About this RNA
This 177-nucleotide RNA was probed chemically with DMS and 2A3. Values cover nucleotides 27 to 126. The DMS profile rests on 3,322 reads. The data come from the RNA Mapping Database (RMDB), library OK1LIB. For DMS the reverse transcriptase was MarathonRT. 2A3 adducts were read by reverse transcription with SuperScript II with manganese.
RNA sequence: GGGAACGACUCGAGUAGAGUCGAAAAAUCUAUACCACUGAUCCGUAUUUACCGUGUCAAUCGCGCUUUUGUAAUCCUCGUUCGAUCGUACGUAAUUCAGCAGAUUAUGAGAAUACGAUCACGGCUACUAUCCAUUAGCCUUCGGGCUAAUGGAUAGAAAAGAAACAACAACAACAAC
Reactivity to DMS in 0.01 (KOAc 150mM, MgCl2 10mM, bicine 150mM(pH8.5), 24C), signal-to-noise 2, nucleotides 027 to 126: a050u010c090u000a120u060a130c010c000a110c020u060g000a080u030c010c010g030u040a090u040u000u010a140c010c020g010u010g000u010c050a070a110u020c010g000c050g000c100u000u010u000u000g020u000a060a090u010c010c040u010c030g000u010u020c180g000a010u000c010g000u000a050c030g000u000a000a000u030u000c070a150g000c080a170g000a030u020u000a050u000g000a040g010a110a180u000a010c010g010a000u000c000a030c070g010g000c100u030a210
Reactivity to 2A3 in 0.01 (KOAc 150mM, MgCl2 10mM, bicine 150mM(pH8.5), 24C), signal-to-noise 6, nucleotides 027 to 126: a000u050c040u030a080u050a070c010c000a050c090u080g020a070u050c020c010g030u060a070u060u140u060a070c020c030g050u040g060u120c040a040a070u050c010g010c010g010c070u050u080u020u060g090u100a050a070u040c010c020u040c030g030u070u090c070g010a020u010c010g010u040a020c020g010u030a000a030u040u070c060a070g040c050a040g090a040u000u010a000u050g050a040g060a110a030u030a020c000g000a000u020c010a000c000g020g010c020u050a050